[RMDB]
RNA sequence: GGGAACGACUCGAGUAGAGUCGAAAAGAUCUCUAAGUCGUCCAGUAGGCGAAAGCACACGCAUACUCUUCGGAGUAUGGUCUUCGGACCGUGUGCGGGACGACUAGAAGCCUACGUGAGAUCGAAAGGGUGACAGGGCCUUCGGGUUCUGUCACCCAAAAGAAACAACAACAACAAC
Reactivity to DMS in 0.01 (KOAc 150mM, MgCl2 10mM, bicine 150mM(pH8.5), 24C), signal-to-noise 3, nucleotides 027 to 126: g000a010u000c010u000c000u010a140a030g010u000c010g010u000c000c000a180g010u050a080g000g020c060g020a130a040a160g000c010a010c000a020c030g000c140a030u000a010c000u010c000u000u070c270g020g000a030g000u000a010u000g000g000u000c010u000u060c160g020g010a030c130c140g010u000g010u000g020c010g020g000g030a010c000g020a020c010u010a010g000a080a130g000c010c000u000a050c100g020u030g000a010g000a030u000c000g010a080a120a110
Reactivity to 2A3 in 0.01 (KOAc 150mM, MgCl2 10mM, bicine 150mM(pH8.5), 24C), signal-to-noise 5, nucleotides 027 to 126: g020a010u010c000u010c020u020a030a020g010u020c010g000u000c010c060a170g160u140a060g050g120c060g100a090a050a010g000c000a010c000a000c000g120c020a020u010a000c000u000c000u040u070c230g100g000a000g000u000a020u020g060g000u000c000u050u100c190g130g010a020c020c020g000u010g010u000g000c020g000g000g000a000c000g010a020c000u000a020g010a040a010g020c000c010u020a030c050g170u230g010a030g000a000u010c030g020a120a060a050

Annotation
Source: RMDB library OK1LIB, as collected in RNAgym. Structure probing data (DMS and 2A3) for a 177-nucleotide construct. Values cover nucleotides 27 to 126. 2A3 adducts were read by reverse transcription with SuperScript II with manganese.